Chemical mapping of a 207-nucleotide RNA with 2A3 and DMS. The reactions ran in a buffer of 150 mM KOAc, 10 mM MgCl2 and 150 mM bicine (pH 8.5), at 24 C. For 2A3, 1,698 sequencing reads were counted.
[RMDB]
RNA sequence: GGGAACGACUCGAGUAGAGUCGAAAAGGAGAGAGAAGUCAACCAGAGAAACACACCAACCCAUUGCACUCCGGGUUGGUGGUAUAUUACCUGGUACGGGGGAAACUUCGUGGUGGCCGAAAAGUGGGGAGAAUUCAGUUCGCUGAAUUCUCCCCACGGAAUAUAUUCAGUUCGCUGAAUAUAUUCCAAAAGAAACAACAACAACAAC
Reactivity to 2A3 in 0.01 (KOAc 150mM, MgCl2 10mM, bicine 150mM(pH8.5), 24C), signal-to-noise 1, nucleotides 027 to 156: g020g000a020g010a010g010a000g020a060a010g040u040c020a020a020c010c010a000g010a000g010a050a080a000c050a000c000a000c050c000a000a010c000c000c020a020u000u190g050c050a060c100u110c100c100g000g000g000u000u000g010g010u000g000g000u070a010u000a000u020u040a030c000c000u010g010g000u030a040c020g000g000g000g000g000a090a020a010c030u050u030c050g010u030g000g030u010g020g010c010c030g020a050a040a010a000g010u010g000g010g010g010a010g010a000a000u000u000c010a010g040u010u060c090g010c070u000g000a000a000u000u010c000u010c000c000c000c000a000c020
Reactivity to DMS in 0.01 (KOAc 150mM, MgCl2 10mM, bicine 150mM(pH8.5), 24C), signal-to-noise 1, nucleotides 027 to 156: g000g010a060g010a070g010a130g010a100a070g010u000c020a100a080c020c010a040g000a130g000a180a150a090c090a070c010a000c020c010a030a040c020c000c000a130u000u010g000c130a110c150u020c110c090g000g000g040u000u000g010g010u010g000g000u000a010u000a080u000u010a120c030c010u000g000g000u000a020c090g050g000g000g030g000a180a050a090c070u000u010c070g000u000g000g040u000g000g020c000c060g010a050a050a040a180g030u020g040g000g030g040a060g010a040a020u000u010c020a040g020u000u000c290g020c020u020g000a040a010u000u000c010u000c000c000c000c010a000c000